[RMDB]
RNA sequence: GGGAACGACUCGAGUAGAGUCGAAAAAUAUUCUGGUACCCGUGUAUUCCGAUAACAGAAUUUUCUUCGUGGGAGGAGUCCUCUAGUUACCUGAAUUGCUUGGAUCAAUAUUGCGCAGAUCAAGGGAUUAUCUGUGUCCCUACCCACCAAAUCCAUACAUACCAGGCGUAUUCGUACGCCUGGUAUGAAAAGAAACAACAACAACAAC
Reactivity to 2A3 in 0.01 (KOAc 150mM, MgCl2 10mM, bicine 150mM(pH8.5), 24C), signal-to-noise 3, nucleotides 027 to 156: a000u090a030u020u000c000u020g040g000u070a080c020c030c040g000u030g050u090a220u100u090c070c020g020a050u040a110a040c020a000g030a040a040u070u020u030u070c070u130u110c060g020u030g020g000g010a020g000g020a090g040u020c000c010u040c010u040a050g010u020u030a090c020c020u040g040a080a050u050u050g000c020u090u090g070g040a050u090c040a130a090u130a130u210u290g070c050g000c020a010g000a050u020c040a060a030g050g020g000a020u020u040a030u070c070u030g090u010g030u100c000c000c010u130a240c010c000c010a010c020c000a090a070a010u050c050c010a040u040a160
Reactivity to DMS in 0.01 (KOAc 150mM, MgCl2 10mM, bicine 150mM(pH8.5), 24C), signal-to-noise 1, nucleotides 027 to 156: a020u000a030u000u000c000u000g020g020u000a040c030c020c030g050u070g050u000a150u020u010c000c020g010a080u000a000a040c010a040g010a040a010u000u020u000u000c060u000u010c070g040u010g020g020g020a140g000g010a090g010u000c000c010u000c020u000a050g010u000u000a040c030c010u030g000a050a110u000u010g000c020u020u020g000g020a130u000c080a090a140u000a120u000u010g000c130g010c020a070g030a090u000c050a070a060g030g020g000a080u000u000a050u000c110u000g020u010g000u010c020c020c020u000a060c040c000c020a060c030c010a050a090a150u010c000c020a070u010a220
Description:
This 207-nucleotide RNA was probed chemically with 2A3 and DMS. It was measured as part of the RMDB library OK3TST. For DMS, 2,516 sequencing reads were counted. High 2A3 reactivity points to a flexible backbone, as in loops and unpaired stretches.